An RNA of 177 nucleotides, treated with 2A3 and read out base by base.
Source: RMDB library M2PK50, as collected in RNAgym.
For 2A3, 1,247 sequencing reads were counted.
Values cover nucleotides 27 to 126.
The RNA was probed in 150 mM KOAc, 10 mM MgCl2 and 150 mM bicine (pH 8.5) at 24 C.
[RMDB]
RNA sequence: GGGAACGACUCGAGUAGAGUCGAAAACACACGUGCUUCGGCACGUGUGAAACCUAGUCAAAAUAACGCAAGACUAGGAAACCGUAAGUACGAAAGUACAAAAAAGGUGAGUGUUCGCACUCACCAAGUCGAGGGAUUAGUUCGCUAAUCCCUCGACAAAAGAAACAACAACAACAAC
Reactivity to 2A3 in 0.01 (KOAc 150mM, MgCl2 10mM, bicine 150mM(pH8.5), 24C), signal-to-noise 1, nucleotides 027 to 126: c010a010c000a010c000g000u010g000c020u030u040c080g120g000c060a000c020g020u010g000u000g020a000a000a000c020c000u000a000g020u020c020a010a040a130a270u140a170a080c140g000c160a190a060g000a000c000u000a000g000g000a020a020a000c010c020g100u130a070a150g010u000a000c010g030a090a000a010g000u000a010c010a070a120a040a040a020a000g000g000u000g020a010g020u030g050u080u100c250g050c080a000c000u000c000a010c000c000a010a000